[RMDB]
RNA sequence: GGGAACGACUCGAGUAGAGUCGAAAAUACAUACGCAGAUGAGGCGAACUACGAUAAGGAUCACCUUGCUUCGUCUCUUACGCAUCAGGUCAGGAGGAUCUUGCAAGGAAAGGUGUCUAUCAACAGAUCGGACUCAAUCAUUCGUGAUUGAGUCCGAAAAAGAAACAACAACAACAAC
Reactivity to DMS in 0.01 (KOAc 150mM, MgCl2 10mM, bicine 150mM(pH8.5), 24C), signal-to-noise 2, nucleotides 027 to 126: u010a140c140a150u000a050c110g010c050a090g040a030u000g020a030g000g040c010g000a010a020c150u000a090c140g020a060u000a060a050g030g010a150u010c180a080c050c030u010u000g000c130u000u000c050g000u000c000u000c020u000u000a080c070g000c050a040u020c140a060g020g010u010c050a060g000g020a060g000g010a060u000c060u000u000g010c080a140a070g010g000a070a050a080g020g040u000g000u000c040u000a030u000c070a070a110c190a050g010a100
Reactivity to 2A3 in 0.01 (KOAc 150mM, MgCl2 10mM, bicine 150mM(pH8.5), 24C), signal-to-noise 2, nucleotides 027 to 126: u080a010c040a020u120a050c020g050c050a000g030a100u040g000a060g000g000c000g030a060a010c030u100a040c160g130a100u040a130a110g080g040a080u100c020a080c120c000u010u050g000c000u020u020c000g030u000c020u000c000u020u050a020c080g030c010a070u080c050a020g040g050u060c030a060g000g110a040g030g010a090u030c000u060u000g010c020a020a080g050g000a100a030a040g060g000u050g010u030c030u010a070u080c030a020a070c000a020g050a130